Structure probing data (DMS and 2A3) for a 207-nucleotide construct. For DMS, 1,654 sequencing reads were counted. It was measured as part of the RMDB library ARCHII. Conditions: 150 mM KOAc, 10 mM MgCl2 and 150 mM bicine (pH 8.5), 24 C. For 2A3, 2,566 sequencing reads were counted.
[RMDB]
RNA sequence: GGGAACGACUCGAGUAGAGUCGAAAAAUUGGUGCGACGUCAUCAAACUGCGGGAAAGCUCCUAUAUGGCAUGGGAUACCAAGCACGGCAUCACACAUUGUGUGUGAUGAGUGUGGCUGAGUUAAUGCACUCGGGUAAGGUAACAACCCCCAUGUCAGGUAUAUCCCAACUUCGGUUGGGAUAUACCAAAAGAAACAACAACAACAAC
Reactivity to DMS in 0.01 (KOAc 150mM, MgCl2 10mM, bicine 150mM(pH8.5), 24C), signal-to-noise 1, nucleotides 027 to 156: a130u000u000g040g000u000g020c000g080a180c180g020u010c050a090u000c050a000a120a050c080u000g020c100g030g030g000a070a160a130g000c050u000c000c000u000a150u000a220u010g060g000c030a070u000g000g010g000a300u000a030c030c010a130a200g000c030a030c000g000g040c000a010u000c000a030c010a050c020a300u000u000g020u030g030u010g010u000g060a000u000g000a050g030u000g030u010g000g020c020u010g030a070g010u030u000a120a150u010g000c190a080c030u000c020g000g000g040u000a080a090g020g010u010a090a050c070a030a100c070c020c000c000c000a010u010g010u010c000a050
Reactivity to 2A3 in 0.01 (KOAc 150mM, MgCl2 10mM, bicine 150mM(pH8.5), 24C), signal-to-noise 4, nucleotides 027 to 156: a000u070u030g030g000u030g030c100g130a110c100g090u230c040a020u010c030a020a080a040c090u100g000c080g020g020g080a080a060a100g050c030u040c020c020u070a080u050a080u300g000g000c000a000u000g000g000g010a000u010a020c020c050a010a020g010c000a000c010g230g000c050a000u000c010a000c010a000c000a130u230u300g110u100g000u000g000u000g250a000u000g000a010g000u010g000u050g000g000c000u000g000a010g000u030u150a140a050u220g010c020a000c000u000c000g020g000g010u070a200a020g000g000u000a000a000c000a000a010c000c000c010c000c000a000u000g000u000c000a010